[RMDB]
RNA sequence: GGGAACGACUCGAGUAGAGUCGAAAACAACUACGGGCAGUCGGUGUUUGAGGGCAUGAAGGCUCAGCGCAGCGCCAAGGGCAACAUUGUCCUGUUCCGGCCGGACGAGAACGCCGCGCGCAUGAUGCUAGUUCUACGGUUUCGACCGUAGAACUAGAAAAGAAACAACAACAACAAC
Reactivity to DMS in 0.01 (KOAc 150mM, MgCl2 10mM, bicine 150mM(pH8.5), 24C), signal-to-noise 3, nucleotides 027 to 126: c050a080a130c110u010a050c170g000g010g040c070a050g010u000c090g020g010u000g000u010u010u000g000a160g000g000g040c030a070u000g000a090a130g030g000c040u000c020a100g010c070g040c100a120g000c110g020c050c080a070a150g010g000g020c000a050a130c090a130u010u000g060u000c010c030u010g010u010u010c080c040g000g000c050c100g000g000a060c040g020a140g020a040a040c090g020c000c050g000c070g020c080g010c070a080u010g010a160u010g020
Reactivity to 2A3 in 0.01 (KOAc 150mM, MgCl2 10mM, bicine 150mM(pH8.5), 24C), signal-to-noise 1, nucleotides 027 to 126: c030a000a060c020u130a000c050g060g000g040c040a120g030u120c030g030g010u030g070u020u050u070g110a090g000g000g080c060a040u080g070a050a030g070g010c010u020c020a060g040c070g000c080a080g080c000g010c040c090a070a120g040g020g000c020a030a050c030a110u060u080g000u000c000c020u010g050u150u030c040c000g030g000c050c030g030g000a020c020g050a060g060a050a000c020g000c030c020g010c000g030c010g000c030a050u100g020a020u100g100